Source: RMDB library OK2TRN, as collected in RNAgym. Chemical mapping of a 177-nucleotide RNA with DMS and 2A3. Reactivities are rounded to 0.1 and cut off at 0 and 3. The RNA was probed in 150 mM KOAc, 10 mM MgCl2 and 150 mM bicine (pH 8.5) at 24 C. For 2A3, 2,202 sequencing reads were counted.
RNA sequence: GGGAACGACUCGAGUAGAGUCGAAAACAGGCUAAGGAUCAUUGCACAUUGAAGGCUCUGGGCCUGCAGCCUGCACCUUCUGUGUUAACGAGGGAAACUGGCGAGUAACUAGAGAGGUGCCCAGGGCGAAAAGUCAACUGUUCGCAGUUGACUUUUCAAAAGAAACAACAACAACAAC
Reactivity to DMS in 0.01 (KOAc 150mM, MgCl2 10mM, bicine 150mM(pH8.5), 24C), signal-to-noise 4, nucleotides 027 to 126: c060a050g010g010c010u000a230a050g000g010a060u000c020a020u000u000g020c040a070c070a280u000u010g010a100a150g010g000c000u000c020u000g010g000g000c010c030u000g020c170a110g020c010c010u000g000c050a080c000c000u000u000c010u000g000u010g010u000u000a030a050c030g000a300g010g000g010a040a050a160c030u010g010g020c080g010a150g010u010a020a040c040u000a050g000a110g000a070g000g010u000g010c010c020c000a120g000g000g010c130
Reactivity to 2A3 in 0.01 (KOAc 150mM, MgCl2 10mM, bicine 150mM(pH8.5), 24C), signal-to-noise 2, nucleotides 027 to 126: c020a020g010g000c000u040a040a030g040g020a060u050c020a040u000u120g030c000a060c050a300u130u260g230a230a050g060g000c000u000c000u000g010g030g000c010c000u030g010c030a010g000c020c000u000g020c030a000c000c000u000u000c010u030g210u020g020u110u100a060a030c010g000a030g010g010g010a110a080a040c020u050g160g050c040g040a090g090u040a040a030c020u080a030g010a010g010a010g120g020u040g000c020c000c010a030g060g010g050c070